Structure probing data (2A3) for a 207-nucleotide construct. Source: RMDB library M2RFPK, as collected in RNAgym. The RNA was probed in 150 mM KOAc, 10 mM MgCl2 and 150 mM bicine (pH 8.5) at 24 C.

[RMDB]
RNA sequence: GGGAACGACUCGAGUAGAGUCGAAAAUAAUUGAUCUGUAGAAUCUGUCAAGCAAAACCCCAAAACCUUACACUGAGAGCAUUUAGCCUGAUUACUCUUUAAAUCAAAUCAGGCAAUAGACAGAAACAAAAUCCGUGACUGUUCGCAGUCACGGAAACUUACCUGAAGACUUCGGUCUUCAGGUAAGAAAAGAAACAACAACAACAAC
Reactivity to 2A3 in 0.01 (KOAc 150mM, MgCl2 10mM, bicine 150mM(pH8.5), 24C), signal-to-noise 1, nucleotides 027 to 156: u140a000a040u100u100g050a060u060c060u180g030u040a070g070a030a030u010c020u030g000u000c020a040a000g080c070a160a090a060a140c020c020c000c020a090a100a000a070c100c020u210u090a160c100a050c150u150g080a010g010a000g040c000a030u020u050u090a020g000c000c000u000g000a000u010u010a020c010u010c000u180u300u070a000a040a010u170c090a040a010a010u000c040a010g000g000c030a000a000u010a000g000a000c040a030g160a080a050a020c000a000a100a020a020u040c010c000g000u000g000a000c000u000g040u080u150c250g000c060a000g000u000c000a000c000g010g000a000a000a000